[RMDB]
RNA sequence: GGGAACGACUCGAGUAGAGUCGAAAAGUAGUGCUCGAGAGGGAGGCUGUCUCGCAGAGCUUUUAGAUCUUCUGAUCUUUCCCUCCUCCAUAUCGCUUAUGCCUCAAGCGAUAGACGCAUAAUUAAACAUUCUCUAAUACUUCGGUAUUAGAGAAUGAAAAGAAACAACAACAACAAC
Reactivity to DMS in 0.01 (KOAc 150mM, MgCl2 10mM, bicine 150mM(pH8.5), 24C), signal-to-noise 9, nucleotides 027 to 126: g010u000a090g020u000g020c060u010c060g000a040g010a110g010g000g020a030g010g010c060u000g020u000c010u000c030g020c150a090g010a250g000c010u000u000u000u000a010g000a010u000c010u010u010c300u010g020a010u000c000u000u000u000c000c000c000u010c050c020u000c020c060a110u000a010u000c010g000c020u000u000a080u010g010c050c030u000c040a140a030g000c000g000a030u000a020g010a080c220g010c120a070u010a070a090u000u010a080a090a220
Reactivity to 2A3 in 0.01 (KOAc 150mM, MgCl2 10mM, bicine 150mM(pH8.5), 24C), signal-to-noise 6, nucleotides 027 to 126: g020u080a010g110u030g190c050u040c090g020a020g010a010g010g060g000a010g040g020c040u040g090u060c010u000c040g030c100a070g030a060g150c000u000u020u000u010a010g000a010u010c010u280u090c180u300g010a010u000c000u000u010u000c010c000c010u040c000c000u020c020c020a100u010a010u040c010g000c030u050u030a070u300g030c010c000u020c020a010a000g000c000g020a010u030a060g080a060c060g020c150a120u120a220a090u300u160a110a120a010